Source: RMDB library OK2TRN, as collected in RNAgym. Structure probing data (DMS) for a 177-nucleotide construct. The RNA was probed in 150 mM KOAc, 10 mM MgCl2 and 150 mM bicine (pH 8.5) at 24 C. For DMS the reverse transcriptase was MarathonRT.
RNA sequence: GGGAACGACUCGAGUAGAGUCGAAAAGCAAGUUGAUGACAAUGACCAGCGGCACCAACCACAUCAGCCGAUUGUUGGCUUCAAUUUGAUUGCGAAAACUGCCAACAGCUUCGAUCGAGUAGCCAGGCGAAGCGGCUUGGUUCGCCAAGCCGCUUCGAAAAGAAACAACAACAACAAC
Reactivity to DMS in 0.01 (KOAc 150mM, MgCl2 10mM, bicine 150mM(pH8.5), 24C), signal-to-noise 1, nucleotides 027 to 126: g020c020a040a070g010u000u000g010a070u000g000a050c130a030a040u000g010a070c040c040a070g030c050g020g000c070a060c110c110a120a060c070c110a130c100a030u040c030a130g030c060c030g000a070u000u000g030u000u000g010g000c000u000u000c170a010a090u000u000u000g010a110u000u000g010c160g000a050a100a010a150c090u000g000c010c030a080a150c070a010g000c080u000u000c050g010a090u010c050g020a070g000u000a030g000c010c050a110g020g010